An RNA of 177 nucleotides, treated with 2A3 and DMS and read out base by base.
For 2A3 the reverse transcriptase was SuperScript II with manganese.
DMS adducts were read by reverse transcription with MarathonRT.
The reactions ran in a buffer of 150 mM KOAc, 10 mM MgCl2 and 150 mM bicine (pH 8.5), at 24 C.
[RMDB]
RNA sequence: GGGAACGACUCGAGUAGAGUCGAAAACGCGAUCGACGGCGACGCGCGCGCGGUGCUCGAUAUCCGGCCGGCGCCCGUGGCAGGCCAGGUGUCGCCGACGCUGGAGGUCGCGCGAUGAGCGUGCCGACCUACGUAAAUCCUUCGGGAUUUACGUAGGAAAAGAAACAACAACAACAAC
Reactivity to 2A3 in 0.01 (KOAc 150mM, MgCl2 10mM, bicine 150mM(pH8.5), 24C), signal-to-noise 8, nucleotides 027 to 126: c050g040c060g080a150u120c080g100a090c040g030g030c050g080a030c000g010c010g010c000g000c000g000c000g020g050u120g100c050u040c080g120a110u050a070u180c010c000g000g010c010c000g020g000c010g030c000c010c010g180u120g050g000c150a140g080g160c020c010a010g010g010u040g070u120c000g000c010c000g030a050c090g000c020u020g040g010a020g010g030u030c010g000c000g000c000g030a070u140g080a020g010c000g000u020g000c000c010g030a050
Reactivity to DMS in 0.01 (KOAc 150mM, MgCl2 10mM, bicine 150mM(pH8.5), 24C), signal-to-noise 6, nucleotides 027 to 126: c030g020c070g000a070u000c060g000a170c060g010g000c010g000a060c040g020c040g010c050g020c010g020c010g010g010u010g010c070u010c060g000a090u000a100u000c040c030g020g000c020c020g010g000c030g000c030c040c040g010u010g010g010c080a090g010g000c020c020a080g000g010u000g010u010c010g010c020c010g000a080c150g020c030u000g000g020a060g010g020u000c010g000c050g000c000g000a050u010g020a130g020c020g030u000g000c010c020g000a250